Conditions: 150 mM KOAc, 10 mM MgCl2 and 150 mM bicine (pH 8.5), 24 C. Chemical mapping of a 207-nucleotide RNA with DMS and 2A3. As a SHAPE reagent, 2A3 marks flexible, mostly unpaired nucleotides at the ribose 2'-OH. DMS adducts were read by reverse transcription with MarathonRT. It was measured as part of the RMDB library RNAMAK.
[RMDB]
RNA sequence: GGGAACGACUCGAGUAGAGUCGAAAACGUCCAUUCGUGGACGGUGUGGCGUACUACAGUGACAUGCAACUCAUUGGAGUCGCUUCCCAAAUAGGAAGCGACUAUGAAGAUGGUGUUGCAACAGCACUGUAUCGCAAGUAUUCGCAUUCGUGCGAAAACCACAAUUUACCUUCGGGUAAAUUGUGGUAAAAGAAACAACAACAACAAC
Reactivity to DMS in 0.01 (KOAc 150mM, MgCl2 10mM, bicine 150mM(pH8.5), 24C), signal-to-noise 2, nucleotides 027 to 156: c020g010u000c000c000a070u000u000c260g070u000g060g020a020c000g000g000u000g010u000g000g050c070g030u000a040c070u010a050c000a040g040u010g010a050c070a300u000g010c020a040a000c000u000c020a050u000u000g040g000a030g040u000c000g040c010u000u000c010c000c030a080a220a240u020a070g000g020a040a010g000c010g060a030c030u000a010u020g010a140a300g010a020u000g000g000u010g000u000u010g000c000a020a000c080a140g040c010a030c000u000g020u010a010u000c040g080c000a050a100g000u000a110u010u000c000g010c010a090u000u000c220g000u040g030c010g000a010a020a060
Reactivity to 2A3 in 0.01 (KOAc 150mM, MgCl2 10mM, bicine 150mM(pH8.5), 24C), signal-to-noise 2, nucleotides 027 to 156: c020g000u010c000c000a010u050u150c300g080u070g000g000a020c030g000g060u260g050u090g020g000c050g000u080a040c090u000a000c020a010g000u000g100a040c030a070u040g010c000a000a050c000u000c010a010u000u010g020g040a010g010u000c020g000c000u000u030c000c000c020a240a210a040u120a060g000g000a000a000g000c030g000a000c020u070a260u100g040a000a010g000a000u010g030g190u120g000u040u010g000c010a000a000c000a000g010c000a020c020u000g000u020a090u250c010g010c010a000a010g080u040a150u100u000c000g000c040a040u080u100c280g060u120g000c000g000a000a000a010
2A3 adducts were read by reverse transcription with SuperScript II with manganese. Reactivities are given for positions 27 through 156.